[RMDB]
RNA sequence: GGGAACGACUCGAGUAGAGUCGAAAAGCCUCCAGGGCACCUGCUGAGGGCCAGGCUCUAUGCCCGGUGCUUUACAGGCAUUACCUUGUCGGCUUCUCCCAGCAACCCUUGGAGAUAGGAGUUACAUGCCCAUUUGUCAGCUGAGGACACCGAGGUACGACGACCAUUAUUUCGAUAAUGGUCGUCGAAAAGAAACAACAACAACAAC
Reactivity to 2A3 in 0.01 (KOAc 150mM, MgCl2 10mM, bicine 150mM(pH8.5), 24C), signal-to-noise 1, nucleotides 027 to 156: g010c000c000u000c020c010a010g050g010g000c080a020c020c000u060g050c140u030g030a020g000g040g000c010c020a000g030g030c030u020c080u200a100u250g000c000c000c000g000g000u080g130c050u050u040u070a030c030a030g000g000c050a050u100u120a080c020c000u000u050g020u060c050g000g010c000u030u030c010u020c050c000c010a000g030c020a020a130c030c000c010u000u040g040g060a030g040a070u080a050g010g040a130g080u110u100a090c050a170u180g050c020c060c050a050u080u040u110g050u000c030a040g030c090u050g030a030g070g040a040c020a040c060c050g030a050g000g040u200a080
Chemical mapping of a 207-nucleotide RNA with 2A3.
2A3 adducts were read by reverse transcription with SuperScript II with manganese.
For 2A3, 676 sequencing reads were counted.
The reactions ran in a buffer of 150 mM KOAc, 10 mM MgCl2 and 150 mM bicine (pH 8.5), at 24 C.